[RMDB]
Conditions: 150 mM KOAc, 10 mM MgCl2 and 150 mM bicine (pH 8.5), 24 C.
Chemical mapping of a 177-nucleotide RNA with DMS and 2A3.
For 2A3, 47,232 sequencing reads were counted.
DMS adducts were read by reverse transcription with MarathonRT.
RNA sequence: GGGAACGACUCGAGUAGAGUCGAAAAGAUAUGGACGGAUGUAGGGAGAAAUAUGGUCGGAAACGACCAUAGUUUCGAGGAUCUACACGUCCGUCCUAAGUCAAAGAGGUAGCUUCGGCUACCUCAAGUAUAGUCAAUUGUUCGCAAUUGACUAUACAAAAGAAACAACAACAACAAC
Reactivity to DMS in 0.01 (KOAc 150mM, MgCl2 10mM, bicine 150mM(pH8.5), 24C), signal-to-noise 7, nucleotides 027 to 126: g010a020u000a030u010g000g000a020c010g020g000a040u000g010u000a020g010g000g000a020g010a010a010a050u000a000u000g000g010u000c000g020g000a010a010a040c000g010a020c000c000a000u000a000g010u000u000u000c010g010a120g020g010a030u010c010u000a000c000a110c210g010u000c000c000g010u000c000c000u010a010a100g000u000c020a100a140a160g010a020g010g010u000a000g010c000u000u010c260g040g010c000u000a000c000c000u000c000a010a070
Reactivity to 2A3 in 0.01 (KOAc 150mM, MgCl2 10mM, bicine 150mM(pH8.5), 24C), signal-to-noise 5, nucleotides 027 to 126: g000a000u020a000u050g000g000a010c000g000g010a010u050g010u020a010g020g000g020a050g010a020a010a000u020a000u000g010g000u000c000g000g000a010a010a000c010g000a000c010c010a010u000a020g040u000u020u000c030g050a210g000g030a010u010c010u020a010c060a020c060g040u000c010c000g000u000c000c000u000a000a000g000u010c050a130a100a150g010a000g000g000u010a000g000c020u080u110c300g110g000c000u020a000c000c000u000c000a000a000